[RMDB]
RNA sequence: GGGAACGACUCGAGUAGAGUCGAAAAGCGUAUGUAGAUGAUGGGACUCUUUUUGGCACUCUCCGCAUUCUGGACCACCCGCGUAUCGCGGGACUUUUUGGUUAAAGACGACGAAGAAGAGUCAACAGGGAACAAGCCGGCGAGAGCGGCCUCGCGCGACUGAAAUCAACUUCGGUUGAUUUCAGUCAAAAGAAACAACAACAACAAC
Reactivity to 2A3 in 0.01 (KOAc 150mM, MgCl2 10mM, bicine 150mM(pH8.5), 24C), signal-to-noise 1, nucleotides 027 to 156: g010c020g000u090a080u210g050u100a060g030a130u130g020a030u070g090g110g000a010c000u020c030u040u010u070u070u010g140g010c040a050c050u020c000u000c010c000g020c090a140u170u000c020u090g000g030a020c020c000a030c000c000c000g000c040g050u220a010u280c150g000c030g000g000g000a000c000u100u070u000u240u090g000g000u020u030a020a020a020g030a030c040g000a000c060g000a020a070g060a090a000g010a050g000u000c000a000a000c030a010g030g060g000a000a140c010a080a000g060c000c000g000g000c000g020a020g000a000g020c000g020g000c010c010u030c010g060c000g040c010